[RMDB]
This 177-nucleotide RNA was probed chemically with DMS. DMS adducts were read by reverse transcription with MarathonRT.
RNA sequence: GGGAACGACUCGAGUAGAGUCGAAAAGACCAAAGCGGCGGUUGAGCUAGCCAAAGAUUGGCGAAGCGAUCGCGCGCUGCGCCGUUUGGAAGCCAUUUUGGCGGUCGCCGAUGAAACCGCAUCGCUAAUCGUCACCUGGUUUCGACCAGGUGACGAUAAAAGAAACAACAACAACAAC
Reactivity to DMS in 0.01 (KOAc 150mM, MgCl2 10mM, bicine 150mM(pH8.5), 24C), signal-to-noise 1, nucleotides 027 to 126: g010a190c020c080a090a190a050g010c010g030g010c000g000g050u000u000g000a090g010c060u010a180g060c000c020a010a080a130g000a200u000u000g010g030c000g000a090a150g010c000g020a040u000c090g020c190g070c000g010c150u030g000c090g050c000c010g030u000u000u010g010g010a130a200g010c080c040a060u020u000u000u010g040g000c000g000g000u000c070g000c040c080g010a040u010g000a060a090a060c030c060g040c050a040u000c000g000c030u010a090

The reactions ran in a buffer of 150 mM KOAc, 10 mM MgCl2 and 150 mM bicine (pH 8.5), at 24 C.